[RMDB]
This 177-nucleotide RNA was probed chemically with 2A3 and DMS. DMS adducts were read by reverse transcription with MarathonRT. 2A3 adducts were read by reverse transcription with SuperScript II with manganese. The reactions ran in a buffer of 150 mM KOAc, 10 mM MgCl2 and 150 mM bicine (pH 8.5), at 24 C.

RNA sequence: GGGAACGACUCGAGUAGAGUCGAAAAGAUAUGGACUGACUAGGGAGGGACACGUCGGAAACGACGUGAAUCCCUUUGAUCUAGCUAGUCCUAAGUCAAAAGAUUGAUUCGCUUCGGCGAAUCAAUCGUUUCCAUUAUACUUCGGUAUAAUGGAAACAAAAGAAACAACAACAACAAC
Reactivity to 2A3 in 0.01 (KOAc 150mM, MgCl2 10mM, bicine 150mM(pH8.5), 24C), signal-to-noise 1, nucleotides 027 to 126: g010a000u010a000u050g000g000a010c010u000g020a160c010u010a010g000g000g010a020g030g000g000a020c010a000c010g020u000c000g000g000a020a000a000c000g010a000c020g000u010g020a010a030u060c000c020c000u000u080u010g010a000u000c000u000a000g000c050u040a000g000u000c000c000u000a010a000g000u000c000a040a040a040a190g010a010u000u020g000a000u010u000c000g000c030u050u100c300g210g000c000g000a000a000u000c000a010a000u010c020
Reactivity to DMS in 0.01 (KOAc 150mM, MgCl2 10mM, bicine 150mM(pH8.5), 24C), signal-to-noise 5, nucleotides 027 to 126: g000a010u000a010u010g000g000a020c000u000g010a020c000u000a000g000g000g000a000g010g020g010a090c000a010c000g010u000c000g020g000a010a000a010c000g010a010c000g010u000g010a110a180u000c000c000c000u000u000u010g000a000u000c000u000a000g020c010u000a000g020u000c010c000u000a000a080g010u000c010a110a090a130a200g000a010u000u000g010a020u000u000c000g010c000u000u010c270g040g010c000g010a010a000u000c000a000a000u000c000